[RMDB]
RNA sequence: GGGAACGACUCGAGUAGAGUCGAAAAGCAACUUAGGAUUUUAGGCUCCCCGUGCGUGUCUCGAACCAUGCCGGGUCAAACCCACGGGGGCUGGCGGUCCCCGUGCGGUCAAAAUCAAACCGCUGGAAAAACAGUUCUAGCUUCGGCUAGAACUGAAGAUUAUGCACUGGUUCGCCAGUGCAUAAUCAAAAGAAACAACAACAACAAC
Reactivity to 2A3 in 0.01 (KOAc 150mM, MgCl2 10mM, bicine 150mM(pH8.5), 24C), signal-to-noise 2, nucleotides 027 to 156: g030c020a000a090c100u140u160a130g090g040a200u130u130u060u130a060g000g060c030u070c000c000c000c000g040u150g060c000g020u040g010u000c060u070c260g070a070a050c010c000a000u020g020c000c020g040g000g000u010c010a020a050a130c000c010c000a000c010g000g000g000g010g010c000u000g000g010c000g000g000u000c000c000c000c000g020u000g000c080g000g010u010c010a040a040a050a220u100c020a070a060a120c010c000g000c000u020g070g000a060a070a030a010a010c000a000g000u000u000c000u000a000g000c000u050u020c180g110g000c000u000a000g000a000a000c000u000g000a000a000